An RNA of 207 nucleotides, treated with 2A3 and read out base by base. For 2A3, 576 sequencing reads were counted. The data come from the RNA Mapping Database (RMDB), library M2RFPK. The reactions ran in a buffer of 150 mM KOAc, 10 mM MgCl2 and 150 mM bicine (pH 8.5), at 24 C.
RNA sequence: GGGAACGACUCGAGUAGAGUCGAAAAGAAAGAAAGAAAGAACUCUGUAAAGUGAGGGAUUGCCUGGACCAGGUCGGCGGGCCUGAUCCAGUUUCCUUCGCUCUGCUCAACGGGCAGACCGCCACAAAAAACGCGUGGCUGUUCGCAGCCACGCGAAGUUCAAGGAAAGGUUCGCCUUUCCUUGAACAAAAGAAACAACAACAACAAC
Reactivity to 2A3 in 0.01 (KOAc 150mM, MgCl2 10mM, bicine 150mM(pH8.5), 24C), signal-to-noise 1, nucleotides 027 to 156: g070a000a120a000g060a020a070a000g050a030a180a000g090a030a030c040u050c070u160g100u200a200a050a050g020u020g030a000g070g000g010a070u070u300g030c010c010u010g020g000a000c000c000a020g010g000u020c040g010g090c000g020g020g020c000c000u010g000a010u000c000c000a010g000u000u070u000c000c000u060u000c000g000c010u060c020u020g000c000u000c000a120a140c090g000g070g000c010a020g030a100c020c030g010c000c000a060c040a070a280a060a050a010a010c000g000c000g070u030g010g070c010u020g030u090u120c150g000c080a000g000c030c000a000c020g070c000g000a000a000